[RMDB]
Record summary
The record gives the reactivity of an RNA of 177 nucleotides to DMS. The reactions ran in a buffer of 150 mM KOAc, 10 mM MgCl2 and 150 mM bicine (pH 8.5), at 24 C. Reactivities are given for positions 27 through 126.
RNA sequence: GGGAACGACUCGAGUAGAGUCGAAAAUACGCGAGGUUCGCCUCGCGUAAAAGAGGAGCGUAAACGUGAGCGUACGUAGUGCUGUACAUCGUACCUACACGAAUGCACAUGGUUUCGACCAUGUGAAUGGCUGAAAAUCCUUCGGGAUUUUCAGCCAAAAAGAAACAACAACAACAAC
Reactivity to DMS in 0.01 (KOAc 150mM, MgCl2 10mM, bicine 150mM(pH8.5), 24C), signal-to-noise 1, nucleotides 027 to 126: u000a010c000g010c000g000a030g000g010u000u010c300g030c010c000u000c000g010c000g000u000a000a020a060a120g010a080g010g010a090g000c020g040u010a110a070a110c020g010u000g000a030g000c300g000u000a000c030g000u010a170g010u000g000c140u000g010u000a050c030a120u000c000g000u010a040c000c010u000a060c000a020c010g000a080a170u010g020c000a020c010a000u030g000g010u000u020u010c150g000a010c010c000a000u000g000u000g000a070a100